[RMDB]
RNA sequence: GGGAACGACUCGAGUAGAGUCGAAAAUUCCUAGGCCCGGAGUCUAUCUCCAUCUGGUCCGUCCGGGCCCUCUUCGCCGGGGGAGCCCCCUCUCCAUCCCUGUCCUUCUUUCCGAGUAUUCCUUUGACAUAGGAAAAUUGUUCGCAAUUUUCCUAUGAAAAGAAACAACAACAACAAC
Reactivity to DMS in 0.01 (KOAc 150mM, MgCl2 10mM, bicine 150mM(pH8.5), 24C), signal-to-noise 2, nucleotides 027 to 126: u000u010c000c000u000a060g010g020c020c020c050g000g010a070g010u010c110u000a080u010c030u010c040c060a070u000c080u000g010g020u000c040c060g010u000c010c040g010g010g000c010c020c020u000c040u010u010c090g010c100c070g010g000g010g000g000a090g000c020c010c020c030c020u010c010u000c020c020a150u000c020c020c010u000g010u000c030c010u000u000c010u000u000u010c030c020g010a090g000u000a160u000u000c010c010u010u010u000g010a300